Chemical mapping of a 177-nucleotide RNA with DMS and 2A3. For 2A3 the reverse transcriptase was SuperScript II with manganese. DMS adducts were read by reverse transcription with MarathonRT. Conditions: 150 mM KOAc, 10 mM MgCl2 and 150 mM bicine (pH 8.5), 24 C. The DMS profile rests on 3,234 reads. Reactivities are rounded to 0.1 and cut off at 0 and 3. High 2A3 reactivity points to a flexible backbone, as in loops and unpaired stretches.
[RMDB]
RNA sequence: GGGAACGACUCGAGUAGAGUCGAAAAGAUAUGGAUCAUGUAGGGAGCGACUCGGAAACGAGAUCGCGAGGAUCUACAGUGAUCCUAAGUCAAAAGUCCGUUAUCGGGUUCGCCCGAUAACGGACAACAAACGGAAUGUGUUCGCACAUUCCGUUUGAAAAGAAACAACAACAACAAC
Reactivity to DMS in 0.01 (KOAc 150mM, MgCl2 10mM, bicine 150mM(pH8.5), 24C), signal-to-noise 3, nucleotides 027 to 126: g010a050u000a300u010g000g000a010u000c010a010u000g000u000a000g000g000g000a060g020c000g000a040c010u000c020g000g010a110a100a200c000g000a010g010a100u000c000g030c000g020a050g010g000a020u010c000u000a010c000a020g010u010g000a000u000c000c000u000a030a080g000u010c050a070a100a170a120g000u000c000c000g020u010u000a000u000c000g000g020g000u010u010c230g000c000c000c000g010a000u000a000a000c000g000g000a000c000a020a070
Reactivity to 2A3 in 0.01 (KOAc 150mM, MgCl2 10mM, bicine 150mM(pH8.5), 24C), signal-to-noise 2, nucleotides 027 to 126: g030a020u090a050u140g000g000a010u020c000a000u030g000u020a010g000g010g020a020g020c010g000a010c010u010c010g020g060a070a070a030c020g000a010g080a220u010c000g010c010g000a020g000g000a020u020c000u000a010c000a100g290u030g070a000u000c000c000u010a070a010g040u020c020a030a010a170a230g000u020c000c000g000u010u000a000u000c010g010g050g040u030u070c250g100c040c000c000g000a000u000a000a000c000g000g010a000c010a000a000